[RMDB]
The record gives the reactivity of an RNA of 207 nucleotides to DMS and 2A3. The DMS profile rests on 6,664 reads. DMS adducts were read by reverse transcription with MarathonRT. Conditions: 150 mM KOAc, 10 mM MgCl2 and 150 mM bicine (pH 8.5), 24 C. For 2A3, 8,786 sequencing reads were counted.
RNA sequence: GGGAACGACUCGAGUAGAGUCGAAAACGCUGGGCACAAGAAGACGUUAGCAAGAACAUGACGUUCUCUGAAGCGCGCACGGAGAACGUCAUGUUUGAUGACCUAACGAGAACUUCUGUGCCUGUGCUGAAGCGCGCACGGCAACCGAAAGGUGCGACUCUGGUACAUACUUCGGUAUGUACCAGAGAAAAGAAACAACAACAACAAC
Reactivity to DMS in 0.01 (KOAc 150mM, MgCl2 10mM, bicine 150mM(pH8.5), 24C), signal-to-noise 2, nucleotides 027 to 156: c070g020c010u010g000g000g020c000a020c020a030a120g000a030a020g030a240c020g010u000u010a010g010c010a050a050g010a010a040c010a030u000g010a030c010g000u000u000c000u000c000u000g000a060a060g030c040g020c010g030c010a300c040g010g000a030g020a030a020c010g010u000c000a000u000g000u000u000u010g000a030u010g010a020c300c010u010a010a020c020g000a090g020a110a160c010u000u000c010u020g010u000g010c000c000u000g010u000g010c030u010g000a080a100g030c000g020c030g030c010a110c090g030g000c010a110a140c000c010g000a080a150a200g010g020u000g010c000g010a160
Reactivity to 2A3 in 0.01 (KOAc 150mM, MgCl2 10mM, bicine 150mM(pH8.5), 24C), signal-to-noise 6, nucleotides 027 to 156: c070g020c010u020g000g000g000c010a000c050a160a190g010a000a000g060a030c010g000u000u000a010g020c070a300a300g010a020a000c000a000u000g000a000c000g000u000u000c000u000c010u020g040a180a080g010c010g000c010g000c020a030c040g000g000a000g010a010a000c000g000u000c000a000u000g000u000u000u000g000a010u010g010a000c000c010u010a010a000c000g030a020g070a180a060c000u000u000c000u000g000u000g000c000c000u000g000u030g000c010u070g030a100a020g000c000g000c000g010c000a010c030g120g010c050a160a180c020c010g050a100a040a040g010g000u020g010c010g050a050